The record gives the reactivity of an RNA of 177 nucleotides to 2A3 and DMS. DMS adducts were read by reverse transcription with MarathonRT. The RNA was probed in 150 mM KOAc, 10 mM MgCl2 and 150 mM bicine (pH 8.5) at 24 C. The DMS profile rests on 2,758 reads.
RNA sequence: GGGAACGACUCGAGUAGAGUCGAAAAGAUAUGGACAGUAGGGAGUCCGAGGAUCGGAAACGAUCCUCUUUGGGACAUCGAUCUACGUCCUAAGUCAAAUCCCCCUUUACUUCGGUAAAGGGGGAAACCUAUCUCUUUUCUUCGGAAAAGAGAUAGGAAAAGAAACAACAACAACAAC
Reactivity to 2A3 in 0.01 (KOAc 150mM, MgCl2 10mM, bicine 150mM(pH8.5), 24C), signal-to-noise 2, nucleotides 027 to 126: g000a000u020a010u060g020g020a020c140a230g050u010a010g010g000g020a040g030u000c040c030g000a000g000g010a000u010c000g010g000a020a020a010c020g000a000u010c000c000u000c000u030u090u120g210g010g000a010c020a070u300c070g020a020u020c000u010a000c010g000u000c000c000u000a070a000g010u010c020a020a080a250u050c000c010c000c000c000u020u000u010a010c000u020u020c120g070g000u000a010a000a000g000g000g000g000g010a010a000a010
Reactivity to DMS in 0.01 (KOAc 150mM, MgCl2 10mM, bicine 150mM(pH8.5), 24C), signal-to-noise 2, nucleotides 027 to 126: g000a020u010a100u010g000g010a020c000a200g010u010a020g010g000g000a060g010u000c000c000g020a010g000g010a000u000c000g020g010a030a040a060c000g000a000u000c000c000u000c000u000u010u010g020g040g010a020c030a260u000c130g010a070u010c000u000a000c020g000u000c000c000u000a020a090g010u000c020a090a110a210u000c000c000c000c000c000u000u000u000a000c000u010u010c230g030g000u010a000a010a010g000g000g010g010g010a000a010a020